[RMDB]
RNA sequence: GGGAACGACUCGAGUAGAGUCGAAAAUAACCGUGAUUCGUCACGGUUAAAAAAGAUAUGGACCAUCCCAGGGUCGAUGAAAUCAUGUCGGAAACGACAUGAUGGAGACCCAUGGGAGUGGUCCUAAGUCAAAAACAUAGCGGUUCGCCGCUAUGAAGUAUGUAUCGAGCUUCGGCUCGAUACAUACAAAAGAAACAACAACAACAAC
Reactivity to 2A3 in 0.01 (KOAc 150mM, MgCl2 10mM, bicine 150mM(pH8.5), 24C), signal-to-noise 2, nucleotides 027 to 156: u070a000a000c010c000g010u010g000a000u070u110c210g020u000c210a000c010g010g000u010u000a000a010a000a000a000a000g040a000u060a030u110g000g000a000c000c000a010u000c000c000c000a000g010g000g020u010c030g080a300u020g010a000a000a010u000c000a000u000g000u000c000g010g020a050a070a120c000g000a000c020a010u010g000a000u000g000g000a000g010a000c040c000c020a010u000g000g020g010a020g060u010g020g000u000c000c000u000a010a000g000u000c050a000a000a000a080a160c010a000u000a000g000c010g040g040u030u040c240g010c070c010g000c000u040a000u050g000a010a020
Reactivity to DMS in 0.01 (KOAc 150mM, MgCl2 10mM, bicine 150mM(pH8.5), 24C), signal-to-noise 1, nucleotides 027 to 156: u000a000a010c000c010g010u000g030a030u010u000c300g040u000c000a030c000g020g000u000u000a000a030a080a110a040a040g000a140u010a200u020g000g000a030c000c010a070u010c010c000c010a090g020g010g000u010c030g000a060u010g010a180a090a010u000c000a040u000g020u000c000g020g000a130a150a300c010g050a010c000a000u000g000a030u000g000g010a110g040a010c020c000c010a010u000g010g000g010a040g060u010g130g000u000c000c010u000a000a030g000u010c030a020a060a080a170a120c000a010u000a060g030c000g000g010u000u010c300g070c030c030g000c000u000a000u000g000a040a150

Background
An RNA of 207 nucleotides, treated with 2A3 and DMS and read out base by base. Reactivities are given for positions 27 through 156. For 2A3 the reverse transcriptase was SuperScript II with manganese. The DMS profile rests on 2,292 reads. The data come from the RNA Mapping Database (RMDB), library RNAMAK.